[RMDB]
RNA sequence: GGGAACGACUCGAGUAGAGUCGAAAACGCAAAGCUGCAGCGCGGCGCUCUGGAGGCGUUGCCCCGCGCACUGCUCUUUACAUGGCCCGACGUGAGGGCACUUCGCGGGCAGUGCUGCGGCCUCGUGAAACUGCCCCUAAGUUCGCUUAGGGGCAAACAUCAUAUCGGUGUUCGCACCGAUAUGAUGAAAAGAAACAACAACAACAAC
Reactivity to DMS in 0.01 (KOAc 150mM, MgCl2 10mM, bicine 150mM(pH8.5), 24C), signal-to-noise 2, nucleotides 027 to 156: c070g060c020a030a070a050g020c060u020g020c030a110g000c050g010c020g000g000c000g010c030u000c020u010g030g040a170g020g000c020g040u010u010g010c030c010c000c000g020c050g020c020a060c020u010g010c000u000c040u000u000u000a140c060a110u020g010g020c010c040c020g010a260c090g080u010g000a100g020g010g010c020a010c010u010u000c060g020c250g020g000g000c030a130g020u000g000c020u000g030c000g010g020c030c050u040c090g000u010g000a100a060a130c090u010g020c000c000c000c000u000a020a060g040u000u010c300g030c020u000u000a030g000g000g030g040c000a000a010a030
Reactivity to 2A3 in 0.01 (KOAc 150mM, MgCl2 10mM, bicine 150mM(pH8.5), 24C), signal-to-noise 4, nucleotides 027 to 156: c040g000c020a080a030a010g030c020u030g010c010a020g010c010g010c020g040g010c000g020c010u080c060u200g230g060a070g000g020c010g010u030u100g040c000c000c010c020g010c000g000c000a020c010u010g010c000u000c000u040u110u160a040c020a110u120g110g030c020c050c050g090a120c060g050u070g030a080g000g000g010c020a040c010u020u040c000g010c010g000g000g000c040a040g060u040g040c010u010g000c000g010g000c000c000u070c020g010u030g040a110a050a040c070u040g000c020c000c000c000u010a010a000g020u040u150c190g070c150u000u000a010g020g000g010g000c000a010a000a000

Source information
Structure probing data (DMS and 2A3) for a 207-nucleotide construct. Conditions: 150 mM KOAc, 10 mM MgCl2 and 150 mM bicine (pH 8.5), 24 C. Source: RMDB library M2RFOK, as collected in RNAgym. For DMS, 4,170 sequencing reads were counted. For 2A3, 3,213 sequencing reads were counted.